[RMDB]
RNA sequence: GGGAACGACUCGAGUAGAGUCGAAAAAGAUUCUGAGCGCUGAAGGGGAGAGCUUUCUCCUAGCCAUGUCAAGGAUAAUCUAUCUAGAUCCUUCUUUGGGAGGGGUAUCUGGAAUGUCCCUCGGAAGAUCAACUCGGUAGUUCGCUACCGAGUUGAUAAAAGAAACAACAACAACAAC
Reactivity to 2A3 in 0.01 (KOAc 150mM, MgCl2 10mM, bicine 150mM(pH8.5), 24C), signal-to-noise 4, nucleotides 027 to 126: a020g040a010u000u000c010u040g000a050g030c080g020c090u090g100a140a070g030g030g030g000a040g040a070g130c000u090u270u000c010u000c000c000u010a030g010c000c030a110u160g060u110c050a030a080g000g000a100u070a210a020u170c030u030a040u010c010u040a030g000a050u040c010c000u070u010c030u100u230u260g220g130g000a020g000g000g000g010u090a050u000c010u030g020g030a100a030u070g050u050c010c030c040u020c020g070g010a050a080g040
Reactivity to DMS in 0.01 (KOAc 150mM, MgCl2 10mM, bicine 150mM(pH8.5), 24C), signal-to-noise 3, nucleotides 027 to 126: a020g030a090u010u010c000u000g010a230g000c160g050c050u000g000a160a070g020g010g000g030a010g020a060g000c220u000u040u000c000u020c000c030u030a080g000c060c020a080u030g000u040c120a140a180g000g000a050u050a090a050u030c060u010a110u040c030u010a050g000a020u020c040c030u000u000c020u000u030u030g010g000g000a010g000g000g040g010u020a070u030c030u000g000g000a040a070u030g000u010c010c000c000u050c110g000g010a130a080g000
An RNA of 177 nucleotides, treated with 2A3 and DMS and read out base by base. The reactions ran in a buffer of 150 mM KOAc, 10 mM MgCl2 and 150 mM bicine (pH 8.5), at 24 C. Values cover nucleotides 27 to 126.